[RMDB]
RNA sequence: GGGAACGACUCGAGUAGAGUCGAAAAGGUGUCCCCUUUCUCCCUCACCAUUCCAUGUGCGUUCCUCCCAGAACUGCACACCUGGUCAAAGAGGAAGGCCUUUCCUGAUAAAGGAGGACCAUUCUCACCCCUUUAUAACUUUCGAGUUAUAAAGGGGAAAAGAAACAACAACAACAAC
Reactivity to DMS in 0.01 (KOAc 150mM, MgCl2 10mM, bicine 150mM(pH8.5), 24C), signal-to-noise 7, nucleotides 027 to 126: g010g010u010g000u000c040c020c010c030u000u000u000c030u010c020c010c020u000c210a060c040c040a070u000u010c100c120a130u000g020u000g020c010g010u000u000c000c050u010c030c050c040a210g000a020a030c020u030g040c020a020c010a050c170c120u010g000g010u010c130a060a120a110g010a010g000g000a010a030g000g010c070c050u000u010u000c000c000u000g010a140u030a070a140a040g010g010a070g000g020a040c000c040a110u010u000c000u000c010a300
Reactivity to 2A3 in 0.01 (KOAc 150mM, MgCl2 10mM, bicine 150mM(pH8.5), 24C), signal-to-noise 9, nucleotides 027 to 126: g070g010u070g040u080c000c000c000c020u000u030u010c020u010c010c000c010u040c020a060c030c010a070u140u040c040c020a030u060g010u010g010c010g010u010u010c010c020u080c010c020c000a010g000a020a020c050u190g010c000a000c000a010c010c040u040g000g030u050c060a080a040a040g010a010g020g010a020a030g020g010c000c010u120u170u050c010c010u060g060a140u180a260a100a010g020g010a030g010g010a050c000c010a070u050u000c010u010c010a070